[RMDB]
RNA sequence: GGGAACGACUCGAGUAGAGUCGAAAAGAAAGACUAAGAUAAUGUCCUCCAGGUUCAUCUCUGUUGUCAUUUGUGGCAUGGACCAUUUGUGACAAUAGAGAUGAACAUGGAGGAUAUUAUCUUAAAACUAUUCUUAAAGUUUCGACUUUAAGAAUAGAAAAGAAACAACAACAACAAC
Reactivity to 2A3 in 0.01 (KOAc 150mM, MgCl2 10mM, bicine 150mM(pH8.5), 24C), signal-to-noise 3, nucleotides 027 to 126: g100a020a080a010g050a020c070u050a010a000g010a000u000a010a010u020g020u030c000c000u000c000c000a020g040g000u000u010c000a000u000c000u000c000u000g000u000u000g000u000c000a020u000u040u050g030u010g010g030c220a300u300g220g050a230c000c000a000u040u020u030g010u000g000a010c000a010a000u000a000g010a000g000a000u000g000a000a000c000a000u000g000g000a000g000g000a000u000a000u000u000a000u000c000u000u000a000a000a000a000
Reactivity to DMS in 0.01 (KOAc 150mM, MgCl2 10mM, bicine 150mM(pH8.5), 24C), signal-to-noise 3, nucleotides 027 to 126: g010a120a080a080g000a160c160u000a000a010g000a010u000a000a010u000g010u000c000c000u000c000c010a010g000g010u000u000c000a000u000c010u000c000u000g020u000u000g010u000c000a000u010u000u000g020u000g010g000c020a280u020g030g010a150c000c000a010u000u000u000g010u000g010a000c000a010a010u000a000g000a010g010a000u000g000a000a000c000a010u000g000g000a000g000g000a000u000a000u000u000a000u000c000u000u000a010a060a100a160
This 177-nucleotide RNA was probed chemically with 2A3 and DMS. For DMS the reverse transcriptase was MarathonRT. The RNA was probed in 150 mM KOAc, 10 mM MgCl2 and 150 mM bicine (pH 8.5) at 24 C. Reactivities are given for positions 27 through 126.